[RMDB]
RNA sequence: GGGAACGACUCGAGUAGAGUCGAAAACUGGAUUUCUGCAAUGUGGCCAUGGAACAGGGGCAGAUCCUCCCCGCCGAACACGACAUGCUCGUGCAGAUUUGGGAAAAGGUAAACGUCCCCGUCGACGAAAUGAAGCAGAUUUCGAUCUGCUUCAUUUAAAAGAAACAACAACAACAAC
Reactivity to DMS in 0.01 (KOAc 150mM, MgCl2 10mM, bicine 150mM(pH8.5), 24C), signal-to-noise 8, nucleotides 027 to 126: c070u000g010g010a100u000u000u000c030u000g020c070a080a070u000g020u010g010g000c030c050a060u000g000g010a110a070c080a090g010g010g010g000c060a050g010a160u010c020c010u000c020c000c000c020g020c030c020g000a060a160c040a030c020g000a050c050a250u010g030c140u000c010g010u010g010c080a080g000a170u000u000u000g010g000g000a030a020a060a060g010g010u000a030a080a190c140g000u010c010c010c010c070g010u000c070g000a120c160g010
Reactivity to 2A3 in 0.01 (KOAc 150mM, MgCl2 10mM, bicine 150mM(pH8.5), 24C), signal-to-noise 4, nucleotides 027 to 126: c030u040g060g040a100u070u140u070c030u080g010c050a090a150u130g050u060g130g000c020c060a080u080g080g000a070a040c040a100g020g000g010g000c020a020g030a140u030c000c010u020c000c000c000c000g100c000c030g010a010a010c020a010c000g030a010c040a130u240g020c050u030c010g010u010g010c020a040g070a250u030u040u060g010g000g020a020a070a010a030g040g020u080a060a110a060c030g070u090c000c000c010c030g090u090c050g010a050c020g020